[RMDB]
Source information
Chemical mapping of a 207-nucleotide RNA with 2A3. Values are in units of 0.01, from 0 to 300, in steps of 10. It was measured as part of the RMDB library OK3TST. The RNA was probed in 150 mM KOAc, 10 mM MgCl2 and 150 mM bicine (pH 8.5) at 24 C. For 2A3, 718 sequencing reads were counted. Reactivities are given for positions 27 through 156.
RNA sequence: GGGAACGACUCGAGUAGAGUCGAAAAAACUCUAGUCACAUCCGCCGAACAGUAUCUCACUGCUCCUUCAGACGUAGUAACGAACUUAACUCGUCAGGCAGACCUGCUAUCACUCACUGAGCAUGGAGAGACAGAUGAGCAUUUAUCCACCGAUCAACCAAAAUCGGUGAUUCGUCACCGAUUUUGGAAAAGAAACAACAACAACAAC
Reactivity to 2A3 in 0.01 (KOAc 150mM, MgCl2 10mM, bicine 150mM(pH8.5), 24C), signal-to-noise 2, nucleotides 027 to 156: a000a000c020u050c010u040a050g000u000c030a040c000a020u030c020c040g010c070c030g010a070a060c030a040g050u050a140u040c010u000c050a030c050u000g030c000u020c020c010u200u180c080a120g000a130c040g080u190a020g010u060a050a080c120g040a060a040c090u110u000a100a010c010u020c020g040u050c000a010g050g000c020a020g080a180c020c010u030g080c000u080a040u230c000a030c080u010c000a100c070u050g010a000g040c000a030u130g060g000a040g020a000g000a050c010a030g080a070u060g040a040g000c010a000u000u090u070a030u030c030c000a000c080c000g000a050u010c000a050a040